[RMDB]
Conditions: 150 mM KOAc, 10 mM MgCl2 and 150 mM bicine (pH 8.5), 24 C. The record gives the reactivity of an RNA of 177 nucleotides to 2A3 and DMS. Reactivities are rounded to 0.1 and cut off at 0 and 3. For DMS the reverse transcriptase was MarathonRT.
RNA sequence: GGGAACGACUCGAGUAGAGUCGAAAAAGAUAUGGAAUCGUGCAAGGCGUAGUAGGUGGCGUUGAAAUAAGCUCGGAAACGAGCUUAUGGAGCCACCGAAACGCUGAUGACCACGAUUCCUAAGUCAGUAUUUAAGACUGUUCGCAGUCUUAAAUACAAAAGAAACAACAACAACAAC
Reactivity to 2A3 in 0.01 (KOAc 150mM, MgCl2 10mM, bicine 150mM(pH8.5), 24C), signal-to-noise 3, nucleotides 027 to 126: a000g060a040u090a030u130g000g010a020a000u000c010g000u010g020c020a220a220g000g000c020g010u010a010g040u000a000g030g010u010g000g000c030g210u300u050g000a000a000a000u000a000a000g000c000u000c000g030g030a040a080a040c020g000a000g000c000u000u000a000u000g000g000a010g000c000c020a000c000c000g010a000a000a000c000g000c000u000g000a020u040g000a010c050c000a000c000g000a000u010u000c000c000u010a110a010g040u010c040a010
Reactivity to DMS in 0.01 (KOAc 150mM, MgCl2 10mM, bicine 150mM(pH8.5), 24C), signal-to-noise 9, nucleotides 027 to 126: a090g010a050u000a300u000g010g000a020a000u000c000g010u000g000c020a100a090g020g020c010g000u000a050g010u000a150g000g010u000g010g010c000g010u010u010g000a120a120a010u000a000a000g010c000u010c000g000g000a100a100a250c010g010a010g010c000u000u000a000u000g010g000a070g010c000c000a000c000c000g000a060a120a080c020g010c000u000g000a030u010g000a130c300c000a000c000g000a010u000u000c000c000u000a020a090g010u010c050a080